The data come from the RNA Mapping Database (RMDB), library OK2TRN. Chemical mapping of a 177-nucleotide RNA with DMS and 2A3. As a SHAPE reagent, 2A3 marks flexible, mostly unpaired nucleotides at the ribose 2'-OH. DMS adducts were read by reverse transcription with MarathonRT. The 2A3 profile rests on 2,833 reads. Conditions: 150 mM KOAc, 10 mM MgCl2 and 150 mM bicine (pH 8.5), 24 C.
[RMDB]
RNA sequence: GGGAACGACUCGAGUAGAGUCGAAAAGAAAGGCAGCCAUUGCAGCCCACGUAGCCAGUCGACGCAUGCUUUUGCAUGCCGCCCACGACUGAGGGCAGCUGCGGCACUGAGGGCAGCUGCCGAAAGACCAUGCGCUAUCAUUCGUGAUAGCGCAUGGAAAAGAAACAACAACAACAAC
Reactivity to DMS in 0.01 (KOAc 150mM, MgCl2 10mM, bicine 150mM(pH8.5), 24C), signal-to-noise 2, nucleotides 027 to 126: g000a090a140a120g010g010c060a020g020c020c120a090u030u000g000c090a110g020c020c010c010a150c100g000u000a050g000c010c030a010g000u000c030g000a170c160g010c010a000u000g000c000u010u000u000u020g020c000a000u000g000c000c100g030c030c010c130a300c000g010a040c040u000g000a090g000g030g000c020a060g000c010u000g010c020g000g000c080a180c240u000g010a060g000g010g020c020a070g010c020u000g030c000c000g000a050a060a070g010a180
Reactivity to 2A3 in 0.01 (KOAc 150mM, MgCl2 10mM, bicine 150mM(pH8.5), 24C), signal-to-noise 3, nucleotides 027 to 126: g070a030a080a010g060g020c010a000g040c040c090a150u120u290g030c040a050g000c000c040c000a030c060g050u050a000g080c040c030a010g020u020c010g040a040c060g000c010a020u020g000c030u170u270u170u300g000c000a000u010g020c040c010g020c000c020c010a090c030g050a010c040u050g050a110g060g100g000c000a000g010c010u000g000c000g040g020c050a070c160u180g070a180g010g070g020c000a010g000c020u020g000c000c010g000a010a020a010g020a010